This 207-nucleotide RNA was probed chemically with 2A3 and DMS.
The data come from the RNA Mapping Database (RMDB), library RNAMAK.
DMS adducts were read by reverse transcription with MarathonRT.
For 2A3 the reverse transcriptase was SuperScript II with manganese.
Reactivities are rounded to 0.1 and cut off at 0 and 3.
For 2A3, 2,675 sequencing reads were counted.
[RMDB]
RNA sequence: GGGAACGACUCGAGUAGAGUCGAAAACCACGCUUCGGCGUGGAAACAACCUUUGUGAUCGACAUGAAGAACUGGUGCGCUUCUACCCAUUGGGUAGAAGAACUACGCACCAUCCUUCAACAGCGAUCACUCUGGUGACAAUAGGGUUCGCCCUAAAUUGUUAAAAAUCGUUCGCGAUUUUUAACAAAAAAGAAACAACAACAACAAC
Reactivity to 2A3 in 0.01 (KOAc 150mM, MgCl2 10mM, bicine 150mM(pH8.5), 24C), signal-to-noise 4, nucleotides 027 to 156: c010c000a010c010g000c020u100u110c300g140g000c000g000u000g000g000a010a030a000c060a010a010c010c000u020u010u000g010u000g010a000u010c000g160a210c120a140u070g010a000a010g040a030a060c120u030g010g000u010g000c000g010c010u000u000c000u000a010c020c000c060a300u160u300g000g010g010u010a000g000a000a000g000a000a040c030u120a010c020g000c000a000c000c000a000u010c000c000u010u000c000a050a030c000a080g060c000g000a000u000c000a000c010u000c010u000g020g010u030g030a020c120a020a290u070a140g040g000g010u020u020c180g150c000c000c010u090a090a110a110
Reactivity to DMS in 0.01 (KOAc 150mM, MgCl2 10mM, bicine 150mM(pH8.5), 24C), signal-to-noise 1, nucleotides 027 to 156: c000c000a050c020g000c020u010u000c300g080g070c000g010u020g000g000a020a080a090c020a140a050c000c020u000u020u010g010u000g020a010u000c020g000a050c050a300u010g000a000a010g000a020a010c130u010g060g030u000g020c040g010c000u000u010c000u000a010c020c020c020a300u000u020g030g050g030u010a000g000a020a040g020a050a140c040u010a150c020g010c000a010c000c000a010u000c010c000u000u000c000a050a050c000a190g030c000g000a040u000c000a000c020u010c060u010g000g020u000g000a100c120a150a120u000a010g000g010g010u000u010c070g080c000c010c000u000a010a050a220